An RNA of 177 nucleotides, treated with 2A3 and DMS and read out base by base.
2A3 adducts were read by reverse transcription with SuperScript II with manganese.

[RMDB]
RNA sequence: GGGAACGACUCGAGUAGAGUCGAAAAGUUGGGGUCGCGGGUUCGAAUCCCGUCUUCUGCUCCAUUAUUUUGCCGGGGUGGCGGAACUGGCAGACGCACAGGACUUAAAAUCCUGCGGUGAGAGAUCCUCUAAGUCCGGAUUCGUCCGGACUUAGAGAAAAGAAACAACAACAACAAC
Reactivity to 2A3 in 0.01 (KOAc 150mM, MgCl2 10mM, bicine 150mM(pH8.5), 24C), signal-to-noise 2, nucleotides 027 to 126: g080u070u060g070g000g010g020u120c050g000c040g050g010g020u050u050c040g040a070a040u000c010c000c000g000u010c010u070u020c020u060g050c000u030c000c030a010u110u120a110u090u220u110u080g060c020c010g000g000g050g020u110g030g010c010g060g010a020a010c020u000g040g010c030a020g010a040c050g020c010a050c000a000g000g010a000c000u090u140a090a070a040a060u030c010c000u070g030c090g090g000u060g020a190g000a000g000a060u010c000
Reactivity to DMS in 0.01 (KOAc 150mM, MgCl2 10mM, bicine 150mM(pH8.5), 24C), signal-to-noise 2, nucleotides 027 to 126: g020u010u000g000g000g030g020u000c090g030c080g000g000g010u020u020c240g000a300a120u010c030c000c080g000u010c090u000u000c010u010g000c070u010c030c070a120u000u010a100u020u040u030u000g000c030c040g010g030g000g000u060g010g000c020g010g040a050a100c100u000g000g000c010a090g020a060c100g040c030a090c090a000g000g000a060c010u010u080a110a100a140a260u000c010c010u000g030c030g040g000u000g000a160g010a080g000a150u040c050
Values cover nucleotides 27 to 126.